An RNA of 207 nucleotides, treated with DMS and 2A3 and read out base by base.
The data come from the RNA Mapping Database (RMDB), library RNAMAK.
[RMDB]
RNA sequence: GGGAACGACUCGAGUAGAGUCGAAAAGGGGUCUAUUUGUCAGCUUCAUGUAAGAGCUUGGAUUUAUGGGUCUGAAGCCUCCACGGACCCAUUGUCAGCUCUGAGUGAAGCUUGGAUUUAAUAGACGGAGGCACCCAAACCUGUCUUCGGACAGGAAUCUAUUUGUUCGAUUCGUCGAACAAAUAGAAAAAGAAACAACAACAACAAC
Reactivity to DMS in 0.01 (KOAc 150mM, MgCl2 10mM, bicine 150mM(pH8.5), 24C), signal-to-noise 2, nucleotides 027 to 156: g020g030g030g020u000c000u000a010u030u000u050g010u000c010a070g020c010u000u000c000a030u020g010u010a300a090g010a050g030c000u000u020g030g010a040u010u020u010a010u010g020g010g020u000c010u000g000a030a190g030c070c030u010c040c040a300c060g040g010a030c010c000c010a030u000u010g000u010c020a050g030c000u000c000u010g010a300g010u000g000a050a030g000c000u000u000g030g000a050u000u000u010a010a030u000a020g000a040c010g050g030a080g030g010c060a100c020c020c040a090a100a190c000c010u000g030u000c010u000u000c300g030g030a060c010a000g020g010a070a050
Reactivity to 2A3 in 0.01 (KOAc 150mM, MgCl2 10mM, bicine 150mM(pH8.5), 24C), signal-to-noise 3, nucleotides 027 to 156: g050g020g020g000u020c020u020a010u020u030u040g030u020c000a000g000c000u010u010c010a040u060g110u230a010a020g000a020g010c050u130u210g210g000a080u140u230u070a010u060g010g000g000u010c000u010g090a120a080g050c010c070u040c060c010a040c010g000g010a000c000c000c000a000u010u010g000u000c000a000g010c000u000c000u000g020a040g020u010g010a020a000g000c000u010u050g000g000a010u080u160u300a030a010u000a010g000a010c000g000g020a010g030g020c030a050c010c010c000a030a070a140c010c010u010g000u000c010u050u070c210g060g000a000c000a000g010g000a010a020